The record gives the reactivity of an RNA of 177 nucleotides to DMS and 2A3.
RNA sequence: GGGAACGACUCGAGUAGAGUCGAAAAGACGUACCUGGCCCAAUGCUGCGGAUUCGCGACGUGCUGGGCGCUCAGGCGCGGGCCGCAGGAGCAGUGUUUGUCGACCCGAUCGCCGACCACUGGUUUGCAGUCUAACACUUUUCGAAGUGUUAGACUGAAAAGAAACAACAACAACAAC
Reactivity to DMS in 0.01 (KOAc 150mM, MgCl2 10mM, bicine 150mM(pH8.5), 24C), signal-to-noise 6, nucleotides 027 to 126: g010a100c100g010u010a060c050c020u000g000g040c010c020c040a120a090u010g010c020u000g010c000g010g010a140u010u010c020g010c000g020a070c050g000u000g000c050u010g020g010g030c130g010c040u000c040a130g020g010c010g010c010g010g000g010c010c010g000c020a030g000g000a130g000c020a020g010u000g000u000u000u000g010u010c010g000a070c020c040c050g000a150u000c070g010c010c010g000a030c020c020a040c050u000g010g010u000u010u000g010
Reactivity to 2A3 in 0.01 (KOAc 150mM, MgCl2 10mM, bicine 150mM(pH8.5), 24C), signal-to-noise 5, nucleotides 027 to 126: g050a010c050g040u050a070c020c020u060g150g020c000c030c000a050a090u180g030c040u020g000c010g130g180a300u080u050c010g010c000g020a050c010g030u040g020c020u090g030g300g030c110g000c040u070c060a060g040g050c000g000c000g000g010g010c010c000g000c010a010g010g030a010g030c010a010g000u020g020u100u100u110g020u020c010g010a070c040c010c010g020a250u070c020g000c030c010g030a040c010c020a050c070u060g000g130u060u080u190g020
For DMS the reverse transcriptase was MarathonRT. It was measured as part of the RMDB library OK2TRN. For DMS, 12,022 sequencing reads were counted. Conditions: 150 mM KOAc, 10 mM MgCl2 and 150 mM bicine (pH 8.5), 24 C.